Source: RMDB library OK2TST, as collected in RNAgym. Structure probing data (2A3 and DMS) for a 177-nucleotide construct. For DMS the reverse transcriptase was MarathonRT.
RNA sequence: GGGAACGACUCGAGUAGAGUCGAAAACAGCGUGGAUGCCUCGCUGCGGCGGUUGGGUACGGACUACCUGGAUCUCUUCGUGAUCCAUCGCUUCGAUCCGGACACCCCGAUCGAGGAAACCUGCGAAUCACUGAUGCACGUUCGCGUGCAUCAGUGAAAAAGAAACAACAACAACAAC
Reactivity to 2A3 in 0.01 (KOAc 150mM, MgCl2 10mM, bicine 150mM(pH8.5), 24C), signal-to-noise 1, nucleotides 027 to 126: c010a000g020c050g120u040g050g020a120u150g060c000c000u000c020g010c040u230g140c000g010g050c170g060g000u090u110g090g000g060u080a040c030g000g000a010c000u010a020c000c050u040g000g030a020u030c090u040c060u190u300c120g140u150g000a000u000c000c010a010u060c040g020c010u100u060c050g120a160u000c000c010g040g000a020c020a060c030c030c010c020g030a060u050c000g000a010g000g000a070a030a070c010c030u030g000c010g020a030a040
Reactivity to DMS in 0.01 (KOAc 150mM, MgCl2 10mM, bicine 150mM(pH8.5), 24C), signal-to-noise 2, nucleotides 027 to 126: c030a070g010c040g000u000g010g000a120u000g000c010c030u000c010g000c080u010g010c060g010g000c090g030g000u000u010g000g000g000u000a180c040g050g000a030c070u000a070c090c060u000g040g000a000u000c000u020c280u030u020c210g020u020g000a010u000c000c010a000u030c060g010c200u000u000c100g000a110u010c020c040g010g010a130c070a040c070c010c010c040g000a050u010c000g000a030g000g010a120a030a080c020c000u000g010c040g010a100a160

Values cover nucleotides 27 to 126.